[RMDB]
RNA sequence: GGGAACGACUCGAGUAGAGUCGAAAACACGACAUCGCUGUCCGGGGCUGGCACGGAAAGUUCCGCCGUUUCACGCCGCGCCAUCCAGUAGCGAAGAUCUCGUGAAAUGCGCGCAACCGCAGAGCGACAUGCGUCGGAUAUUCGUAUCCGACGCAUGAAAAGAAACAACAACAACAAC
Reactivity to 2A3 in 0.01 (KOAc 150mM, MgCl2 10mM, bicine 150mM(pH8.5), 24C), signal-to-noise 2, nucleotides 027 to 126: c080a000c060g120a040c030a110u030c030g000c050u070g060u100c020c050g030g000g000g000c030u020g000g050c040a000c040g020g030a030a100a040g030u100u020c000c000g000c010c000g010u000u010u050c080a060c090g000c030c000g000c000g000c020c000a040u080c080c000a050g040u060a010g030c000g010a040a020g060a080u060c030u000c050g010u010g000a040a070a030u090g000c080g000c000g000c020a020a000c010c000g060c040a020g000a010g100c020g000a010
Reactivity to DMS in 0.01 (KOAc 150mM, MgCl2 10mM, bicine 150mM(pH8.5), 24C), signal-to-noise 3, nucleotides 027 to 126: c080a080c090g000a070c140a090u010c010g020c040u000g000u000c160c040g010g020g010g020c030u000g000g000c060a060c010g000g000a040a060a110g010u000u000c070c010g050c030c030g000u000u000u000c040a040c170g000c110c040g010c010g010c020c000a100u010c120c060a110g000u000a160g000c000g020a050a070g000a110u020c080u010c010g000u000g010a100a090a070u000g000c110g020c060g010c090a060a070c050c010g000c160a100g000a090g020c050g010a140
Overview
The record gives the reactivity of an RNA of 177 nucleotides to 2A3 and DMS. The reactions ran in a buffer of 150 mM KOAc, 10 mM MgCl2 and 150 mM bicine (pH 8.5), at 24 C. For 2A3, 3,121 sequencing reads were counted.